[RMDB]
RNA sequence: GGGAACGACUCGAGUAGAGUCGAAAAGGGGUCAACUUUUGACGGUCUCCUCUUCGCUAUGAAGUGUACUGAAGCCUCCACGGUACAUGGAGCGAAUGAGACCGAUAAGUUGACGGAGGCACCCAAACUGACCCUGCCGUUCGCGGCAGGGUCAGAACGAUAAAGUCAUCUUCGGAUGACUUUAUCGAAAAGAAACAACAACAACAAC
Reactivity to 2A3 in 0.01 (KOAc 150mM, MgCl2 10mM, bicine 150mM(pH8.5), 24C), signal-to-noise 2, nucleotides 027 to 156: g050g020g090g000u000c010a010a010c010u080u100u130u300g230a140c110g000g000u000c000u020c010c010u060c060u000u020c010g010c000u060a300u300g000a020a000g010u000g000u000a000c000u020g050a100a000g000c010c000u000c010c010a000c000g020g000u020a010c000a000u010g010g000a010g000c010g010a000a010u120g000a010g000a000c010c000g010a010u020a050a010g000u000u010g000a010c000g000g000a000g000g000c000a040c010c000c000a050a030a060c000u000g010a010c010c010c010u010g020c000c000g030u060u100c300g010c000g140g000c000a000g000g010g000u000c000a000g000a000a000

The record gives the reactivity of an RNA of 207 nucleotides to 2A3. The reactions ran in a buffer of 150 mM KOAc, 10 mM MgCl2 and 150 mM bicine (pH 8.5), at 24 C. The 2A3 profile rests on 2,446 reads. For 2A3 the reverse transcriptase was SuperScript II with manganese.